Conditions: 150 mM KOAc, 10 mM MgCl2 and 150 mM bicine (pH 8.5), 24 C.
Structure probing data (2A3 and DMS) for a 207-nucleotide construct.
It was measured as part of the RMDB library OK3TST.
DMS adducts were read by reverse transcription with MarathonRT.
As a SHAPE reagent, 2A3 marks flexible, mostly unpaired nucleotides at the ribose 2'-OH.
[RMDB]
RNA sequence: GGGAACGACUCGAGUAGAGUCGAAAAGGCUCCAGCCUUCUCCCCACAGGAUCAGCCUCCAGCUUUGGACUGACAGGCUGGGCGUGUAGCUGUGUGCCCCAGGCCUGUGCUGGGGGGAAGGGGGGCAAUGUCUGGGGCAGGCAGGACACCCCACUGAAUUAAAUGAGUGGUUCGCCACUCAUUUAAUAAAAGAAACAACAACAACAAC
Reactivity to 2A3 in 0.01 (KOAc 150mM, MgCl2 10mM, bicine 150mM(pH8.5), 24C), signal-to-noise 2, nucleotides 027 to 156: g040g000c020u060c060c020a160g090c030c000u030u000c010u030c000c010c050c000a030c010a060g180g080a120u080c020a010g060c030c010u040c060c000a060g030c150u230u240u230g040g070a140c020u010g030a010c010a020g000g000c030u070g030g000g000c110g030u060g010u060a140g110c070u050g060u030g090u090g110c010c000c010c020a070g160g080c020c040u080g010u050g080c120u030g000g010g000g020g000g020a000a020g030g010g000g010g000g000c030a030a050u120g030u030c020u000g010g000g020g000c010a010g000g070c010a010g000g060a010c000a030c010c030c030c010a020c040u070g030a050
Reactivity to DMS in 0.01 (KOAc 150mM, MgCl2 10mM, bicine 150mM(pH8.5), 24C), signal-to-noise 1, nucleotides 027 to 156: g010g010c010u010c000c020a150g010c030c020u000u000c020u010c010c000c000c030a220c060a110g010g000a140u000c030a070g020c000c010u010c040c020a090g020c090u000u000u000g050g020a120c030u000g000a050c020a050g030g000c010u000g020g030g020c060g040u010g000u030a110g080c030u010g020u010g030u000g020c010c000c010c040a120g030g020c000c050u000g020u020g010c060u000g000g000g020g010g020g030a010a060g020g010g000g000g030g000c060a040a040u000g010u000c020u020g030g020g030g020c000a100g040g030c010a080g000g010a220c000a060c000c000c000c000a190c040u000g000a290